RNA sequence: GGGAACGACUCGAGUAGAGUCGAAAAAACCGGCAGUAUUGGGGAGGAUGGUAGUGUCCUCGGGCGAGAUCACUUCCAGCAAGCUGGGCUCACCCUUGUCCUGACCCAGGUUCACGCGGCGAAUGGCUGAUAGCGAAGGAUUCGUCCUUCGCUAUCAAAAAGAAACAACAACAACAAC
Reactivity to DMS in 0.01 (KOAc 150mM, MgCl2 10mM, bicine 150mM(pH8.5), 24C), signal-to-noise 4, nucleotides 027 to 126: a070a040c050c010g000g010c060a100g020u000a090u000u010g010g010g010g010a040g010g010a060u000g010g010u010a060g020u000g020u000c020c010u000c040g010g010g000c060g010a050g000a050u000c040a060c090u000u010c020c060a080g000c110a050a070g010c090u000g000g000g000c090u000c050a080c070c030c030u010u000g010u010c040c020u000g000a130c030c010c020a060g010g010u000u000c090a070c060g010c040g020g020c040g010a060a060u000g000g020c210
Reactivity to 2A3 in 0.01 (KOAc 150mM, MgCl2 10mM, bicine 150mM(pH8.5), 24C), signal-to-noise 2, nucleotides 027 to 126: a000a000c030c010g050g020c050a070g030u190a050u140u100g030g060g000g010a030g050g010a030u030g060g080u160a130g080u040g020u140c030c000u040c000g010g030g010c080g050a050g010a030u080c020a000c020u110u020c010c000a000g000c100a070a080g020c050u010g000g030g000c020u000c010a030c010c010c000u010u080g050u000c000c050u070g080a120c010c010c010a000g010g000u070u050c070a060c090g010c010g000g000c030g070a090a040u110g130g000c040